[RMDB]
RNA sequence: GGGAACGACUCGAGUAGAGUCGAAAAGCGUGGGCGACUAUGGUCCGUUUGGAUUCGAUCCCGACGAAUUCGAUCGGGUGAUCCGGGAGGGGAGCGAGGGACUGCGCGACGCGUUCGAGCGGAUCGGGACCGAGCUUGUGUUCGCACAAGCUCGGUCAAAAGAAACAACAACAACAAC
Reactivity to DMS in 0.01 (KOAc 150mM, MgCl2 10mM, bicine 150mM(pH8.5), 24C), signal-to-noise 2, nucleotides 027 to 126: g000c090g000u010g000g000g020c020g030a130c120u010a120u050g000g020u010c030c000g000u040u020u090g000g000a020u000u030c120g000a100u000c000c040c000g000a230c010g050a260a090u010u040c140g050a160u020c000g000g000g010u050g000a090u000c070c030g000g000g000a160g000g020g000g040a200g000c090g000a190g000g010g000a070c060u010g030c000g010c070g010a110c090g040c030g010u060u030c040g000a070g000c030g000g000a060u010c080g000g000
Reactivity to 2A3 in 0.01 (KOAc 150mM, MgCl2 10mM, bicine 150mM(pH8.5), 24C), signal-to-noise 3, nucleotides 027 to 126: g040c050g050u050g020g000g040c000g020a020c100u120a170u250g040g000u000c000c010g020u020u070u070g020g010a030u050u060c010g050a100u060c010c000c030g020a010c020g010a060a130u120u100c040g080a170u020c010g000g000g000u040g010a030u000c000c000g000g010g000a230g000g000g010g000a020g090c110g040a100g020g030g020a030c000u050g020c010g050c020g010a030c010g010c020g060u050u110c030g030a020g030c010g070g010a100u060c010g040g070